RNA sequence: GGGAACGACUCGAGUAGAGUCGAAAACUUCAAGCGCAUUACUCGCUCCAUAGAUUCAUUAAACCUUAAUGAACACAAGAAACACUCAAAAAGUAAGAGAUUCUUCGCCUGAGCUGCAAUUCUUAAGGGUGGCGUCUUCGAGGCAUCGAAGACGCGAAGUAAUCCCUGGGUUCGCCCAGGGAUUACUAAAAGAAACAACAACAACAAC
Reactivity to 2A3 in 0.01 (KOAc 150mM, MgCl2 10mM, bicine 150mM(pH8.5), 24C), signal-to-noise 2, nucleotides 027 to 156: c060u180u110c070a070a100g000c000g000c020a080u090u160a110c060u070c110g000c010u000c020c020a210u050a270g050a220u040u070c010a000u020u090a130a240a300c000c020u050u010a030a000u050g020a010a060c040a000c050a200a060g050a180a220a020c070a020c030u100c040a080a140a020a090a050g110u140a140a030g050a010g020a190u170u000c010u000u050c050g070c010c010u080g050a050g000c070u030g000c060a110a120u050u060c010u000u170a060a100g000g040g000u080g040g040c010g030u000c000u000u000c000g060a060g080g000c070a150u020c010g000a000a010g020a000c000g000c000g000a020
The record gives the reactivity of an RNA of 207 nucleotides to 2A3.
The RNA was probed in 150 mM KOAc, 10 mM MgCl2 and 150 mM bicine (pH 8.5) at 24 C.